Chemical mapping of a 177-nucleotide RNA with 2A3 and DMS. Conditions: 150 mM KOAc, 10 mM MgCl2 and 150 mM bicine (pH 8.5), 24 C. For 2A3 the reverse transcriptase was SuperScript II with manganese. Source: RMDB library OK1LIB, as collected in RNAgym. Reactivities are given for positions 27 through 126.

[RMDB]
RNA sequence: GGGAACGACUCGAGUAGAGUCGAAAACAGAACAACGCUUUAAAAUUAUUCCUAAAGCUAAAAGAGGAACAUAUAGUGCAGUUAAUGCAUUAGGUAUUCAUUUUUCAGAAACACUAGCUAGGUUAGGCCAUACGUGCGUCUUCGGACGCACGUAUGGAAAAGAAACAACAACAACAAC
Reactivity to 2A3 in 0.01 (KOAc 150mM, MgCl2 10mM, bicine 150mM(pH8.5), 24C), signal-to-noise 3, nucleotides 027 to 126: c040a000g240a090a040c090a010a030c140g010c040u070u170u220a040a110a080a090u240u180a090u300u180c000c000u030a090a000a100g050c000u000a060a000a000a060g050a000g060g040a040a010c010a000u250a000u060a140g030u020g020c010a020g040u200u300a300a110u100g000c000a010u000u000a050g040g000u060a170u090u070c020a070u060u060u030u000u080c050a060g070a070a090a010c090a000c060u010a000g010c010u020a010g000g210u200u060a060g020g090
Reactivity to DMS in 0.01 (KOAc 150mM, MgCl2 10mM, bicine 150mM(pH8.5), 24C), signal-to-noise 1, nucleotides 027 to 126: c280a140g000a080a060c060a010a050c030g030c050u000u000u040a000a000a080a190u080u000a140u120u010c020c000u000a030a230a140g040c010u000a170a000a020a010g000a030g000g000a030a000c130a160u000a280u000a000g000u000g060c000a040g000u050u000a120a180u010g000c000a000u000u000a010g000g080u000a040u000u000c100a000u030u000u000u000u000c060a030g000a210a050a040c300a050c090u000a130g030c060u000a160g080g000u000u000a000g000g000